[RMDB]
RNA sequence: GGGAACGACUCGAGUAGAGUCGAAAAGAUAUGGAAGAUGCUCCCCACCCUUGGGCAGCUUGGACCUGCAUUCGUCGGAAACGACGAAUGCAGCUAGCUGCCAUCAAGGAGGCAUCUUCCUAAGUCACAGUGAGAUAUAGUUCGCUAUAUCUCACUGAAAAGAAACAACAACAACAAC
Reactivity to 2A3 in 0.01 (KOAc 150mM, MgCl2 10mM, bicine 150mM(pH8.5), 24C), signal-to-noise 2, nucleotides 027 to 126: g060a080u270a140u290g010g010a000a000g010a000u010g000c000u180c060c010c010c000a030c000c030c000u010u000g010g010g000c010a010g000c030u080u210g160g100a180c030c010u010g020c000a010u000u010c000g020u000c010g010g060a070a090a120c020g020a000c000g000a010a000u000g000c000a000g010c000u000a000g000c000u000g000c000c000a010u030c000a010a000g000g000a000g020g000c000a000u000c010u000u010c000c000u000a010a020g120u080c040a010
Reactivity to DMS in 0.01 (KOAc 150mM, MgCl2 10mM, bicine 150mM(pH8.5), 24C), signal-to-noise 6, nucleotides 027 to 126: g020a100u010a190u020g000g010a010a020g010a030u000g020c020u000c160c020c010c070a300c090c020c010u000u000g000g000g020c010a000g010c000u000u000g020g000a140c300c020u000g000c010a010u000u000c000g020u000c010g000g000a120a090a110c000g000a010c010g000a000a000u000g000c000a000g010c030u000a020g010c000u000g000c000c000a040u020c010a020a010g000g000a100g020g010c010a010u000c010u000u000c000c000u000a010a100g000u000c120a240

Structure probing data (2A3 and DMS) for a 177-nucleotide construct.
For DMS the reverse transcriptase was MarathonRT.
For DMS, 7,907 sequencing reads were counted.
For 2A3 the reverse transcriptase was SuperScript II with manganese.